[RMDB]
RNA sequence: GGGAACGACUCGAGUAGAGUCGAAAAUGACAACUCCUGCAGCUGCUCAAGUUGAAGAUCAAGCAUCGGAGGAUCAGCACAUCGAGGAAGAACCAAUGGAGGUCGGAGAAGAUGAUGGUGCUGCAGAGCCAUGAGGAGUAUUCGUACUCCUCAUGGCAAAAGAAACAACAACAACAAC
Reactivity to 2A3 in 0.01 (KOAc 150mM, MgCl2 10mM, bicine 150mM(pH8.5), 24C), signal-to-noise 2, nucleotides 027 to 126: u170g050a020c010a060a070c070u030c040c000u000g000c010a000g010c010u190g010c030u010c040a100a110g030u060u040g070a090a040g010a060u050c080a070a040g060c030a070u060c050g030g040a060g000g010a050u070c010a020g060c010a050c020a100u080c060g050a070g050g010a040a100g040a040a040c070c000a090a070u150g140g010a090g020g000u030c050g000g050a060g000a070a040g070a030u090g000a010u040g040g120u060g010c000u040g000c000a020g020a030
Reactivity to DMS in 0.01 (KOAc 150mM, MgCl2 10mM, bicine 150mM(pH8.5), 24C), signal-to-noise 3, nucleotides 027 to 126: u000g010a120c160a120a110c070u000c050c020u000g000c020a010g020c000u020g020c100u020c060a060a090g050u000u000g000a190a100g000a060u020c060a060a130g020c110a070u000c050g010g020a080g020g010a020u000c050a070g010c090a050c040a050u010c060g010a120g010g000a120a090g020a110a120c050c030a080a090u000g010g000a080g040g020u000c020g010g010a180g000a040a060g010a120u010g000a080u000g030g050u000g000c020u040g010c080a040g000a170
This 177-nucleotide RNA was probed chemically with 2A3 and DMS. For DMS the reverse transcriptase was MarathonRT. 2A3 adducts were read by reverse transcription with SuperScript II with manganese. The RNA was probed in 150 mM KOAc, 10 mM MgCl2 and 150 mM bicine (pH 8.5) at 24 C.